[RMDB]
RNA sequence: GGGAACGACUCGAGUAGAGUCGAAAAGUACCCCUCGAUACUUCGGUAUCGAGGGGUACAUUUUCCUCCCGGGAGAACUGCCUGAUAGGGUGCUUGCGAGUGCCCCGGGAGGUCUCGUAGGCAUGCAUCAGGAUAGAGUUCGCUCUAUCCUGAUGAACAUGUCCUUGAACUUCGGUUCAAGGACAUGAAAAGAAACAACAACAACAAC
Reactivity to 2A3 in 0.01 (KOAc 150mM, MgCl2 10mM, bicine 150mM(pH8.5), 24C), signal-to-noise 1, nucleotides 027 to 156: g020u000a000c000c000c020c010u000c010g000a000u000a010c010u080u070c270g090g030u000a000u000c000g000a010g010g010g010g030u000a000c000a000u000u000u000u000c010c000u010c000c020c000g010g000g000a120g010a090a050c060u080g020c020c000u090g060a190u230a210g040g060g010u080g030c040u120u110g070c080g110a040g010u070g020c000c000c000c000g020g000g000a000g000g020u020c010u000c000g120u160a080g000g080c080a090u090g020c000a000u000c000a010g000g000a000u000a000g010a010g020u130u050c280g040c100u000c010u000a010u030c030c000u010g000a000u000g000a020a000

The data come from the RNA Mapping Database (RMDB), library PKBHTP. Chemical mapping of a 207-nucleotide RNA with 2A3. Reactivities are given for positions 27 through 156. The 2A3 profile rests on 807 reads.